Record summary:
This 177-nucleotide RNA was probed chemically with DMS. Conditions: 150 mM KOAc, 10 mM MgCl2 and 150 mM bicine (pH 8.5), 24 C. For DMS the reverse transcriptase was MarathonRT.
[RMDB]
RNA sequence: GGGAACGACUCGAGUAGAGUCGAAAAGAUAUGGACCCAAGCACAUCUUCAUCUUGACAUGAAGUUAUUCGGAAACGAAUAUACUUCAACAGCAAGCCCGGUGAAGAUGUGCUUGGGUCCUAAGUCAGAACUCCGUAUAGUUCGCUAUACGGAGUUCAAAAGAAACAACAACAACAAC
Reactivity to DMS in 0.01 (KOAc 150mM, MgCl2 10mM, bicine 150mM(pH8.5), 24C), signal-to-noise 1, nucleotides 027 to 126: g010a030u010a300u010g000g040a000c000c000c020a000a000g010c000a000c010a000u000c010u000u010c000a000u020c000u050u010g050a080c090a180u000g000a030a010g010u000u000a000u000u010c000g000g000a080a130a270c020g000a020a010u010a010u010a030c010u000u000c000a010a180c280a130g010c200a110a070g020c250c110c260g010g040u000g000a000a000g000a010u000g020u000g010c000u000u010g000g000g000u000c010c000u000a010a040g010u010c050a160